[RMDB]
RNA sequence: GGGAACGACUCGAGUAGAGUCGAAAAUAUCCCCUAUACUUGUAUAGGCGAUUAAUAAAUCUUCUGUAAAUGCUGUAAGAGGAUUACCCCUUGAGGUUUCAGCACUAGGCUGCUCUAGCGAUUAAUCACAACGAUUUGGUCUUCGGACCAAAUCGAAGACAUGGUAAUUGUUCGCAAUUACCAUGUCAAAAGAAACAACAACAACAAC
Reactivity to DMS in 0.01 (KOAc 150mM, MgCl2 10mM, bicine 150mM(pH8.5), 24C), signal-to-noise 2, nucleotides 027 to 156: u000a090u010c010c010c000c010u000a040u000a010c030u000u040g040u000a050u000a050g030g000c080g000a060u000u000a080a100u010a060a080a080u000c000u000u000c010u000g000u000a100a140a090u000g000c020u000g020u020a150a100g010a050g000g000a070u000u000a080c050c000c000c060u000u010g020a110g030g010u000u000u000c060a110g010c000a040c080u000a150g020g010c030u000g000c060u000c060u010a160g020c030g000a170u000u000a090a090u000c080a110c060a090a300c020g000a010u000u000u000g060g010u000c000u000u000c300g040g010a030c000c000a000a010a010u010c000g000a030a050
Reactivity to 2A3 in 0.01 (KOAc 150mM, MgCl2 10mM, bicine 150mM(pH8.5), 24C), signal-to-noise 4, nucleotides 027 to 156: u090a000u010c010c020c000c000u010a010u010a060c040u120u200g040u060a030u030a050g010g000c010g010a020u010u120a130a080u120a160a100a040u030c010u090u010c010u050g210u230a050a140a160u110g030c070u040g090u140a050a000g000a000g030g030a010u000u060a050c000c000c010c000u010u050g050a080g030g070u040u120u230c010a000g030c000a010c080u080a050g200g030c010u020g000c010u060c030u090a010g050c000g070a060u070u210a100a120u140c050a050c050a170a090c050g000a000u000u020u000g000g010u000c010u030u040c210g050g010a000c000c000a000a010a000u000c000g000a020a010